[RMDB]
RNA sequence: GGGAACGACUCGAGUAGAGUCGAAAAUCAAUAGGCAACUGGUUGAGUUUUGCAAUUGAUGCUGCAACGGGAUCACAGAUGGCCAGAUGAACUGGUAGCAAUAGUCCUCCAUAUGUUGCGGCAAGGACUCCUAGUACUAACACAGCUUUUGCAUCCACGGAUUACGGUAGUUCGCUACCGUAAUCCGAAAAGAAACAACAACAACAAC
Reactivity to 2A3 in 0.01 (KOAc 150mM, MgCl2 10mM, bicine 150mM(pH8.5), 24C), signal-to-noise 2, nucleotides 027 to 156: u070c010a040a040u070a170g140g000c020a020a020c130u050g050g060u140u200g030a000g000u120u190u120u090g080c080a120a120u050u210g050a080u010g020c000u000g000c000a000a030c010g010g000g000a020u090c050a000c010a060g060a090u020g100g000c040c000a030g100a090u250g080a180a080c000u000g000g120u110a030g170c000a060a170u050a180g020u110c040c000u010c040c000a030u130a050u300g010u000u000g000c000g000g000c000a010a010g040g000a030c060u010c020c000u010a030g020u030a070c040u090a060a070c060a020c050a070g040c000u080u040u010u030g000c080a060u000c030c070a000